Notes
Structure probing data (DMS and 2A3) for a 177-nucleotide construct. Reactivities are given for positions 27 through 126. The RNA was probed in 150 mM KOAc, 10 mM MgCl2 and 150 mM bicine (pH 8.5) at 24 C.
RNA sequence: GGGAACGACUCGAGUAGAGUCGAAAAGAUAUGGAUCACUAGGACAUGACUCGCGACUCGGAAACGAGUCUGAGUCAACAGCCUAAUGAUCCUAAGUCAAAGAGAUUAGGCUUCGGCCUAAUCUCAACACAUUCAUAGCCUUCGGGCUAUGAAUGUGAAAAGAAACAACAACAACAAC
Reactivity to DMS in 0.01 (KOAc 150mM, MgCl2 10mM, bicine 150mM(pH8.5), 24C), signal-to-noise 1, nucleotides 027 to 126: g000a010u000a030u010g000g010a000u000c000a030c010u000a020g000g000a000c050a290u000g000a010c000u000c000g010c280g000a010c000u010c000g010g000a010a020a070c000g000a010g000u000c000u000g000a020g000u000c000a050a110c280a060g010c000c000u000a010a020u000g000a010u000c000c000u000a010a040g030u000c010a060a170a100g000a000g010a010u000u000a000g040g010c000u000u010c300g060g020c000c000u000a000a000u010c000u000c000a040a170
Reactivity to 2A3 in 0.01 (KOAc 150mM, MgCl2 10mM, bicine 150mM(pH8.5), 24C), signal-to-noise 2, nucleotides 027 to 126: g000a010u020a010u050g020g020a010u000c010a000c000u020a000g000g000a020c140a300u300g000a000c050u000c020g070c220g060a000c000u010c030g000g050a010a010a000c020g010a010g030u020c000u010g010a010g000u000c010a090a020c030a040g000c000c000u010a000a020u000g000a010u030c000c000u000a000a020g000u020c010a110a120a160g000a000g000a010u040u010a010g010g020c010u070u140c300g090g010c000c000u000a010a010u000c010u020c010a020a020